[RMDB]
Conditions: 150 mM KOAc, 10 mM MgCl2 and 150 mM bicine (pH 8.5), 24 C. An RNA of 177 nucleotides, treated with DMS and read out base by base. For DMS, 1,092 sequencing reads were counted. It was measured as part of the RMDB library OK2TRN.
RNA sequence: GGGAACGACUCGAGUAGAGUCGAAAAUGCAGAGCUAUGUCACAAUACCCCCGUAAGCAGAGCCUAGACAAGAGUUACAUCACCUGGUUGAUCAGUGCAGAGAUAUCUCACAAUGUCCCUGCAGGCAUGCACCCAAUGUUUUCGAACAUUGGGUGCAAAAAGAAACAACAACAACAAC
Reactivity to DMS in 0.01 (KOAc 150mM, MgCl2 10mM, bicine 150mM(pH8.5), 24C), signal-to-noise 2, nucleotides 027 to 126: u000g040c030a040g020a090g010c070u000a060u000g000u020c100a030c090a050a110u000a290c060c020c000c060c050g000u020a030a070g010c060a040g000a090g000c030c040u000a040g010a060c030a070a030g020a080g000u000u000a080c150a080u000c080a050c010c020u000g040g020u000u000g000a060u000c050a060g010u000g010c040a000g000a000g020a060u000a010u000c040u000c220a100c220a110a050u000g000u000c000c010c000u010g030c030a030g010g000c060a090